Structure probing data (DMS) for a 177-nucleotide construct. The DMS profile rests on 710 reads. Reactivities are given for positions 27 through 126. Source: RMDB library OK2TRN, as collected in RNAgym. Conditions: 150 mM KOAc, 10 mM MgCl2 and 150 mM bicine (pH 8.5), 24 C.
RNA sequence: GGGAACGACUCGAGUAGAGUCGAAAAAUGAAGGCAUCCGACAGGGUGUUUCAACGGGCUAUGCAACAGAGAGCCUAUCCGCAUGUCUAGCGACGAGUCUGAGUAAGGACGAACUUGCCUUUGUCGAUGGACUGCCUGAAUUCGUUCAGGCAGUCCAAAAAGAAACAACAACAACAAC
Reactivity to DMS in 0.01 (KOAc 150mM, MgCl2 10mM, bicine 150mM(pH8.5), 24C), signal-to-noise 1, nucleotides 027 to 126: a150u020g000a090a030g010g000c070a010u000c070c030g010a230c300a100g000g020g070u000g000u000u000u010c040a080a020c230g020g000g050c000u000a120u000g010c140a160a140c110a050g000a110g000a060g000c050c020u000a050u010c060c050g000c000a040u010g030u000c040u000a070g000c070g000a010c060g020a040g000u010c060u000g010a130g000u000a050a050g010g020a080c150g020a030a060c100u000u000g010c200c020u020u000u010g010u010c100g030a120